RNA sequence: GGGAACGACUCGAGUAGAGUCGAAAAUCGUCAAGAAACAGAAACCGCAACAGGGUGUCGCAGUAAUAAUCUUUCAGAAAGCGGGCAGUUUUAUGCCUGAUAUUACACCACGCUUUCGGUUUGGAAACAACCCAAGCUAGUUCGCUAGCUUGGGUUGAAAAGAAACAACAACAACAAC
Reactivity to DMS in 0.01 (KOAc 150mM, MgCl2 10mM, bicine 150mM(pH8.5), 24C), signal-to-noise 3, nucleotides 027 to 126: u000c060g020u000c020a140a050g010a090a070a030c090a120g010a010a040a000c030c010g010c290a060a010c150a040g010g000g010u000g000u010c100g000c100a120g010u010a020a040u000a040a110u050c030u000u010u010c240a170g010a080a080a040g000c030g020g000g000c020a010g020u020u020u080u040a080u030g000c030c000u000g010a050u000a030u000u000a000c030a190c090c020a040c000g010c000u000u000u000c000g010g010u000u000u000g000g000a130a070a080
Reactivity to 2A3 in 0.01 (KOAc 150mM, MgCl2 10mM, bicine 150mM(pH8.5), 24C), signal-to-noise 3, nucleotides 027 to 126: u070c030g160u030c040a060a000g030a040a210a000c050a010g130a020a000a030c000c020g010c060a040a040c030a150g110g030g000u060g050u050c040g020c110a060g010u010a010a000u030a000a060u090c110u050u150u050c030a100g190a160a080a000g070c010g020g020g000c020a050g000u040u200u270u190a060u040g010c010c000u040g000a000u020a010u030u000a000c010a020c010c000a010c000g240c010u060u010u000c000g000g000u000u010u050g010g000a000a080a000
The data come from the RNA Mapping Database (RMDB), libraries RFM100 and RFMREP. An RNA of 177 nucleotides, treated with DMS and 2A3 and read out base by base. DMS adducts were read by reverse transcription with MarathonRT. The RNA was probed in 150 mM KOAc, 10 mM MgCl2 and 150 mM bicine (pH 8.5) at 24 C.